[RMDB]
RNA sequence: GGGAACGACUCGAGUAGAGUCGAAAACACAGGCGACUUAAUCGGAGAGCGGUUACACGCGAGGAAGAUGAAAUUAUUACAUCACUAGACUCGAGAUUACUACAACUUGCGUUGCUAUCUCAAAUAACACGGGUAUACUAUUCGUAGUAUACCCGUGAAAAGAAACAACAACAACAAC
Reactivity to DMS in 0.01 (KOAc 150mM, MgCl2 10mM, bicine 150mM(pH8.5), 24C), signal-to-noise 4, nucleotides 027 to 126: c050a070c080a090g020g010c040g020a090c150u000u000a050a060u010c020g010g010a100g000a090g020c030g010g000u000u020a100c190a080c050g000c020g010a050g000g000a100a080g010a020u010g000a070a110a150u010u010a090u010u010a120c030a020u010c010a120c050u000a070g000a150c040u000c030g010a080g030a080u000u000a060c100u000a030c130a110a060c040u000u000g000c110g010u000u000g020c080u000a070u000c020u000c030a080a060a070u010a050a130
Reactivity to 2A3 in 0.01 (KOAc 150mM, MgCl2 10mM, bicine 150mM(pH8.5), 24C), signal-to-noise 3, nucleotides 027 to 126: c080a000c010a000g020g040c020g030a060c060u050u110a050a040u100c030g060g000a040g020a030g070c060g000g000u050u100a060c080a000c040g030c000g010a030g070g010a050a120g010a050u040g030a060a130a000u250u230a110u050u130a090c020a030u040c010a010c080u120a040g040a070c010u000c030g050a060g000a080u040u090a050c050u030a030c010a080a030c020u010u050g030c050g050u020u050g000c030u050a060u040c030u000c010a120a110a110u180a140a030
This 177-nucleotide RNA was probed chemically with DMS and 2A3.
The reactions ran in a buffer of 150 mM KOAc, 10 mM MgCl2 and 150 mM bicine (pH 8.5), at 24 C.
Values cover nucleotides 27 to 126.
Source: RMDB library M2PK90, as collected in RNAgym.